[RMDB]
RNA sequence: GGGAACGACUCGAGUAGAGUCGAAAAAAAGCAUUCGUGCUUUGAGCUGACCUUUGUGUUUGAACAUACUCUCCGAUAAGCGUAUGGAGCCCAUUGGGCUCCAUGACGCUUUUGACGGAGUCAAACACUCUGGUAGAAAUUCAGAUUCGUCUGAAAACAAUUAUUAGGUUUUCGAACCUAAUAAUUGAAAAGAAACAACAACAACAAC
Reactivity to 2A3 in 0.01 (KOAc 150mM, MgCl2 10mM, bicine 150mM(pH8.5), 24C), signal-to-noise 2, nucleotides 027 to 156: a000a000a000g060c050a070u130u120c180g090u050g010c010u040u020u060g030a050g070c060u050g110a030c000c000u000u000u000g010u010g000u010u020u010g010a040a030c050a100u260a180c090u060c040u010c060c000g030a040u030a040a010g000c010g000u000a000u000g000g010a010g000c070c000c030a140u090u240g000g010g000c000u020c000c000a000u010g020a020c010g000c000u010u000u000u010g010a010c000g000g000a000g000u000c010a010a000a000c000a000c000u000c020u000g010g000u030a020g090a040a160a080u050u010c000a000g020a050u010u060c120g100u010c070u030g020a040a070a010a030
Reactivity to DMS in 0.01 (KOAc 150mM, MgCl2 10mM, bicine 150mM(pH8.5), 24C), signal-to-noise 2, nucleotides 027 to 156: a060a020a020g010c020a070u010u000c210g050u010g040c010u010u000u000g010a140g000c050u000g020a050c020c000u000u000u010g000u000g010u000u000u000g010a100a110c130a220u020a140c060u010c020u010c010c010g010a240u000a010a010g020c000g060u000a020u000g020g010a030g010c000c000c000a300u000u000g120g030g020c000u050c000c000a010u010g010a010c000g010c010u000u000u000u010g010a250c060g000g010a040g040u000c000a020a020a010c010a020c020u000c020u000g010g010u000a040g010a120a060a140u000u000c000a010g000a140u000u000c220g010u000c000u000g000a050a050a120a240

Structure probing data (2A3 and DMS) for a 207-nucleotide construct.
Reactivities are given for positions 27 through 156.
Conditions: 150 mM KOAc, 10 mM MgCl2 and 150 mM bicine (pH 8.5), 24 C.
The data come from the RNA Mapping Database (RMDB), library RNAMAK.
DMS adducts were read by reverse transcription with MarathonRT.